About this RNA
Chemical mapping of a 177-nucleotide RNA with 2A3 and DMS. The 2A3 profile rests on 2,917 reads. For DMS the reverse transcriptase was MarathonRT. For DMS, 1,926 sequencing reads were counted.
[RMDB]
RNA sequence: GGGAACGACUCGAGUAGAGUCGAAAAGAUAUGGAUUUCUCCCUACAUCGAAGAACUCGGAAACGAGGGAGAUGUAAGGAGAGAAUCCUAAGUCAAACGGUGCUUGCGGUUCGCCGCAAGCACCGAAGGUAAAGUUACUGUUCGCAGUAACUUUACCAAAAGAAACAACAACAACAAC
Reactivity to 2A3 in 0.01 (KOAc 150mM, MgCl2 10mM, bicine 150mM(pH8.5), 24C), signal-to-noise 2, nucleotides 027 to 126: g000a010u100a070u150g010g010a020u080u110u000c000u000c000c010c000u000a000c000a000u000c020g230a300a060g000a080a060c000u000c030g000g000a050a080a060c010g000a000g020g000g000a020g000a000u000g000u010a000a110g000g010a090g020a010g060a010a020u000c000c010u020a100a020g080u080c050a110a080a050c020g000g020u030g060c020u030u000g000c010g000g230u060u140c300g030c060c030g000c000a000a010g070c030a010c020c000g000a000a020
Reactivity to DMS in 0.01 (KOAc 150mM, MgCl2 10mM, bicine 150mM(pH8.5), 24C), signal-to-noise 2, nucleotides 027 to 126: g000a080u000a300u010g000g000a040u000u010u010c000u000c000c000c030u010a010c000a010u000c020g000a100a200g000a090a190c000u020c000g000g010a140a100a160c000g000a020g000g000g000a040g010a000u000g010u000a000a040g010g000a040g000a010g000a020a020u000c000c000u010a050a180g020u000c040a100a080a210c020g000g010u000g000c000u020u000g030c030g020g030u000u040c230g010c030c000g000c000a010a020g000c000a000c010c000g000a000a010